[RMDB]
RNA sequence: GGGAACGACUCGAGUAGAGUCGAAAAUUCAUUUUCAAGUUCAGCCAAGCAAGCAGCUUCACAGCGCCACAAGGCCACACACAAGAGAGCAAGAGGCCACAUUCAUUGCGCAGUUCACACAGCCAAGGCAGGCGCGCCAUUCAGCAGGCUUGCGCGCCUCGCACAUCUCAUUCGUGAGAUGUGCGAGAAAAGAAACAACAACAACAAC
Reactivity to DMS in 0.01 (KOAc 150mM, MgCl2 10mM, bicine 150mM(pH8.5), 24C), signal-to-noise 1, nucleotides 027 to 156: u000u000c050a130u000u010u000u000c060a070a190g070u020u030c010a110g010c030c010a060a170g000c020a010a150g040c040a110g000c030u000u000c030a050c050a300g110c040g030c000c010a080c070a110a210g030g060c040c020a060c110a120c050a050c010a050a190g000a150g060a140g000c000a110a030g020a150g000g060c040c030a010c000a090u000u010c030a160u020u000g000c060g030c050a130g010u000u000c040a060c010a090c110a150g010c060c000a000a060g070g090c000a010g010g020c000g030c020g030c000c010a050u020u000c010a130g040c040a070g000g060c050u000u000g000c000g030c020g000c070
Reactivity to 2A3 in 0.01 (KOAc 150mM, MgCl2 10mM, bicine 150mM(pH8.5), 24C), signal-to-noise 2, nucleotides 027 to 156: u070u030c020a050u060u080u060u070c050a040a110g010u080u090c020a000g010c030c010a220a000g000c000a000a040g000c030a030g000c060u140u140c100a040c050a090g000c000g000c040c000a090c070a040a070g030g000c000c000a050c000a000c000a000c020a130a110g170a000g000a010g080c010a090a020g100a070g060g000c070c000a050c010a090u100u100c090a140u130u030g020c050g000c040a040g040u090u100c020a010c020a030c040a100g000c030c020a000a000g030g000c010a030g060g000c050g000c000g000c050c000a110u150u160c030a020g010c030a010g170g000c000u000u000g030c000g000c020g000c020
This 207-nucleotide RNA was probed chemically with DMS and 2A3. The RNA was probed in 150 mM KOAc, 10 mM MgCl2 and 150 mM bicine (pH 8.5) at 24 C. For 2A3 the reverse transcriptase was SuperScript II with manganese. For DMS the reverse transcriptase was MarathonRT.